[RMDB]
RNA sequence: GGGAACGACUCGAGUAGAGUCGAAAAGCACCAGCAUUGAAUUCACCCAAUGUUGAGGCCUGUGGUUAUAGUGAUAGAGUACAACAAAUCACACUCGGGAAUUCAACAAUAACAACACAAGAAGCAGGCGUAGGGUCAAGUUCGCUUGACCCUACGCAAAAGAAACAACAACAACAAC
Reactivity to 2A3 in 0.01 (KOAc 150mM, MgCl2 10mM, bicine 150mM(pH8.5), 24C), signal-to-noise 1, nucleotides 027 to 126: g010c010a000c000c000a000g030c000a000u080u070g300a090a030u190u030c000a170c000c000c000a030a030u020g000u020u030g030a030g000g200c000c100u070g000u000g030g030u000u070a120u020a300g000u100g000a000u000a000g180a180g050u150a000c050a180a000c000a000a120a000u030c050a000c000a000c020u000c000g000g000g040a000a300u000u000c020a000a050c000a000a160u220a130a030c000a050a000c050a000c070a000a130g230a010a130g100c030a000g120
Conditions: 150 mM KOAc, 10 mM MgCl2 and 150 mM bicine (pH 8.5), 24 C. Structure probing data (2A3) for a 177-nucleotide construct. For 2A3 the reverse transcriptase was SuperScript II with manganese. Source: RMDB library OK1LIB, as collected in RNAgym.